[RMDB]
RNA sequence: GGGAACGACUCGAGUAGAGUCGAAAAUUGGCGAGUUACGCUAUACACGUCCUAAAACAUCAGAGCUAAACUGUCAAUUGGCUCAUGUGCGGUAUAUAUUUACAGAUAAAACCGGGACAUUGACAGACAUCCUAAAUGAGUUCGCUCAUUUAGGAUGAAAAGAAACAACAACAACAAC
Reactivity to DMS in 0.01 (KOAc 150mM, MgCl2 10mM, bicine 150mM(pH8.5), 24C), signal-to-noise 8, nucleotides 027 to 126: u020u010g020g010c020g030a250g020u030u030a100c030g020c010u000a060u030a100c180a110c150g010u000c010c010u000a070a070a120a070c070a050u020c180a080g010a010g010c010u010a030a060a160c010u000g010u000c000a040a060u010u000g000g010c000u000c000a040u020g000u010g000c030g000g000u000a050u030a060u010a030u020u020u050a120c260a130g000a080u010a050a060a060a040c010c010g000g000g000a030c080a080u000u000g000a010c020a020g030a300
Reactivity to 2A3 in 0.01 (KOAc 150mM, MgCl2 10mM, bicine 150mM(pH8.5), 24C), signal-to-noise 9, nucleotides 027 to 126: u120u060g020g000c040g010a070g160u190u160a100c020g010c010u020a010u060a090c120a030c080g030u020c010c010u100a120a100a040a030c030a020u130c070a030g000a000g010c010u030a030a020a080c010u010g000u010c010a030a090u040u030g020g000c000u010c020a060u060g030u030g040c030g020g030u010a060u000a010u000a040u120u160u110a120c110a040g120a090u090a090a110a000a010c010c010g000g000g010a020c080a120u010u040g010a000c000a000g040a040
Description: The record gives the reactivity of an RNA of 177 nucleotides to DMS and 2A3. For DMS, 20,253 sequencing reads were counted. For DMS the reverse transcriptase was MarathonRT. The reactions ran in a buffer of 150 mM KOAc, 10 mM MgCl2 and 150 mM bicine (pH 8.5), at 24 C. DMS (dimethyl sulfate) methylates the pairing face of unpaired adenines and cytosines. 2A3 is a SHAPE reagent: it acylates the 2'-hydroxyl of flexible nucleotides of all four kinds.